[RMDB]
RNA sequence: GGGAACGACUCGAGUAGAGUCGAAAAGAAAGAAUUGUCGUGCGCAACGCGCGUUACUCGGGUACUUUAGGCUGUGCCAAUUUCGAAUCAGUCAGGUACCUGAAGUAGCGCGCGCUGCGGCGAAAAACAGUAUUGGAGGGUUCGCCCUCCAAUACUGAAAAGAAACAACAACAACAAC
Reactivity to DMS in 0.01 (KOAc 150mM, MgCl2 10mM, bicine 150mM(pH8.5), 24C), signal-to-noise 3, nucleotides 027 to 126: g010a140a090a070g010a070a090u000u040g000u000c000g030u000g020c010g040c000a000a060c000g010c000g000c000g020u010u000a000c000u000c000g010g000g010u000a000c010u000u020u050a090g010g000c000u000g000u010g000c300c060a090a210u010u040u030c150g020a170a210u000c000a000g010u000c000a040g000g010u010a000c000c000u000g000a020a020g040u000a000g000c000g010c000g000c010g020c020u010g010c000g010g000c000g020a010a030a040a110a130
Reactivity to 2A3 in 0.01 (KOAc 150mM, MgCl2 10mM, bicine 150mM(pH8.5), 24C), signal-to-noise 6, nucleotides 027 to 126: g140a030a080a010g150a070a100u200u180g080u060c020g010u230g300c010g000c010a000a000c000g010c000g000c000g010u000u000a000c000u000c000g020g000g000u010a010c000u080u090u170a100g000g000c000u000g010u050g030c020c050a140a270u170u240u280c120g010a040a060u020c000a000g010u000c000a010g030g000u000a000c000c000u010g000a010a010g000u010a000g000c010g010c000g000c000g000c000u000g000c000g000g010c000g020a030a000a000a000a010